[RMDB]
RNA sequence: GGGAACGACUCGAGUAGAGUCGAAAAUGUCUCCUUCGGGAGACAAAAAUAGUCCAAAAGGUCUUUCCUGUUUGCUAUGGCCUUGAGGAAUGUGGCCCUAGAUCCAAAACUGGGCGUUCGCGCCCAGGUCUACCUUCGUAUUCGUACGAAGGUAGACAAAAGAAACAACAACAACAAC
Reactivity to DMS in 0.01 (KOAc 150mM, MgCl2 10mM, bicine 150mM(pH8.5), 24C), signal-to-noise 2, nucleotides 027 to 126: u000g010u010c000u000c000c000u000u030c170g070g020g020a000g000a000c000a000a040a090a090a030u000a120g030u000c000c010a060a160a080a060g000g010u000c010u000u000u000c010c040u010g000u020u010u010g000c060u010a050u010g010g000c000c020u010u000g000a300g000g000a020a050u010g020u010g010g000c010c010c050u000a110g000a040u010c150c100a060a050a110a300c000u000g000g000g000c000g010u000u030c210g000c000g020c000c000c000a020g000
Reactivity to 2A3 in 0.01 (KOAc 150mM, MgCl2 10mM, bicine 150mM(pH8.5), 24C), signal-to-noise 2, nucleotides 027 to 126: u020g010u020c000u010c000c040u030u060c100g100g010g000a010g000a000c020a000a000a000a000a000u030a010g020u000c010c000a000a030a050a000g020g020u000c030u050u070u120c040c040u180g160u270u240u210g060c060u050a050u190g010g020c010c000u020u020g010a050g030g050a010a050u160g030u080g070g010c000c050c000u080a150g030a140u010c100c060a020a040a030a140c010u000g010g000g000c000g030u040u040c210g040c040g000c040c000c010a000g000